[RMDB]
Source: RMDB library M2PK50, as collected in RNAgym. Structure probing data (2A3 and DMS) for a 177-nucleotide construct. DMS adducts were read by reverse transcription with MarathonRT. Reactivities are rounded to 0.1 and cut off at 0 and 3. The DMS profile rests on 1,341 reads.
RNA sequence: GGGAACGACUCGAGUAGAGUCGAAAAAUCGAAUACUUCGGUAUUCGAUCAAGGGCUGUAUUUCUCGCUGACUUUCAGCCCCAAACAAAAAAUGUCAGCAAAUUCCAUACUCAUUCGUGAGUAUGAACUUACAGUUUUUCUUCGGAAAAACUGUAAGAAAAGAAACAACAACAACAAC
Reactivity to 2A3 in 0.01 (KOAc 150mM, MgCl2 10mM, bicine 150mM(pH8.5), 24C), signal-to-noise 2, nucleotides 027 to 126: a000u010c000g000a000a000u000a010c020u000u030c090g070g000u010a010u000u000c000g000a000u020c010a100a170g030g000g000c000u020g010u030a130u030u080u000c150u070c090g000c000u000g000a010c020u020u020u000c000a000g010c000c000c000c080a020a050a010c020a020a010a000a000a000a000u100g000u010c000a010g000c000a010a070a000u100u000c030c000a000u000a010c000u010c000a020u060u040c210g070u010g020a010g000u010a000u000g010a010a010
Reactivity to DMS in 0.01 (KOAc 150mM, MgCl2 10mM, bicine 150mM(pH8.5), 24C), signal-to-noise 2, nucleotides 027 to 126: a030u000c000g000a040a010u000a010c000u010u010c230g030g020u010a000u000u000c000g010a000u000c150a130a180g000g020g000c000u000g000u000a100u000u000u000c030u000c160g010c000u000g000a010c000u000u000u010c010a000g010c000c000c020c220a020a000a240c020a010a000a010a010a000a000u030g010u000c000a000g010c010a130a120a110u010u000c090c010a010u000a000c000u000c000a030u000u020c140g020u000g000a010g010u000a000u000g010a020a120